[RMDB]
RNA sequence: GGGAACGACUCGAGUAGAGUCGAAAAGAAUGACGUCCAGGGUAGUAUCGUCACACCACUGAAGGUCAUCGAGAUAUAAAACCAACGGAUGAGACUUGGUUGGAAUAGCAGCAACCACUUUGCACAGACCAAUGCUAAACUUCGGUUUAGCAUUGGUAAAAGAAACAACAACAACAAC
Reactivity to DMS in 0.01 (KOAc 150mM, MgCl2 10mM, bicine 150mM(pH8.5), 24C), signal-to-noise 4, nucleotides 027 to 126: g000a140a050u010g000a040c010g010u010c020c020a040g000g000g010u000a120g010u000a060u000c190g010u010c190a040c090a080c020c020a120c030u000g000a070a050g010g010u000c020a030u010c050g000a120g020a080u010a080u000a030a060a100a100c030c030a030a130c130g000g000a100u010g000a100g000a080c050u000u000g020g010u010u010g020g000a080a110u000a070g000c070a040g020c030a030a100c040c030a110c080u000u000u010g000c080a060c120a120g000
Reactivity to 2A3 in 0.01 (KOAc 150mM, MgCl2 10mM, bicine 150mM(pH8.5), 24C), signal-to-noise 2, nucleotides 027 to 126: g110a030a050u030g020a000c030g110u040c050c020a020g050g030g010u050a100g050u030a150u180c090g110u100c100a020c010a010c040c000a190c040u030g060a050a030g070g030u010c000a010u070c030g060a010g070a120u110a020u050a170a090a020a030c020c010a030a030c070g090g030a030u100g070a040g030a080c050u010u040g030g000u020u050g070g010a120a030u090a140g090c080a010g010c010a040a000c010c010a020c070u070u140u150g020c070a070c020a070g040